[RMDB]
An RNA of 177 nucleotides, treated with 2A3 and DMS and read out base by base. For DMS, 1,609 sequencing reads were counted. For 2A3 the reverse transcriptase was SuperScript II with manganese. The reactions ran in a buffer of 150 mM KOAc, 10 mM MgCl2 and 150 mM bicine (pH 8.5), at 24 C. DMS adducts were read by reverse transcription with MarathonRT. Source: RMDB library TTRDEL, as collected in RNAgym.
RNA sequence: GGGAACGACUCGAGUAGAGUCGAAAAGAUAUGGAUUGUAGACAUGCUAUGGUCUCGGAAACGAGACUGCAUAGCAACAGCUACACUGUCCUAAGUCAAAAUCGAGCACUGUUCGCAGUGCUCGAAACGUGCAAAAUGUGUUCGCACAUUUUGCACGAAAAGAAACAACAACAACAAC
Reactivity to 2A3 in 0.01 (KOAc 150mM, MgCl2 10mM, bicine 150mM(pH8.5), 24C), signal-to-noise 2, nucleotides 027 to 126: g060a050u090a060u170g010g010a000u040u080g000u010a000g050a130c050a120u140g000c000u000a000u030g000g000u000c000u000c000g040g040a050a050a020c010g010a000g020a000c000u010g000c000a010u000a000g020c010a010a020c050a020g030c000u010a000c020a050c080u130g040u000c010c010u050a080a040g050u050c040a030a000a020a300u010c020g000a010g000c000a000c010u010g010u050u070c220g070c150a000g010u000g030c000u010c000g010a000a000a000
Reactivity to DMS in 0.01 (KOAc 150mM, MgCl2 10mM, bicine 150mM(pH8.5), 24C), signal-to-noise 2, nucleotides 027 to 126: g000a050u000a300u000g000g000a050u000u010g000u000a030g000a050c040a190u000g020c010u000a010u000g000g000u010c000u010c000g040g010a020a050a180c000g000a010g010a010c020u000g020c030a000u000a000g000c030a000a050c280a140g000c010u000a000c010a020c300u020g010u000c000c000u000a090a080g010u000c050a060a060a090a090u010c010g010a000g010c010a000c000u000g000u010u000c180g000c010a030g030u000g000c000u000c010g000a000a030a060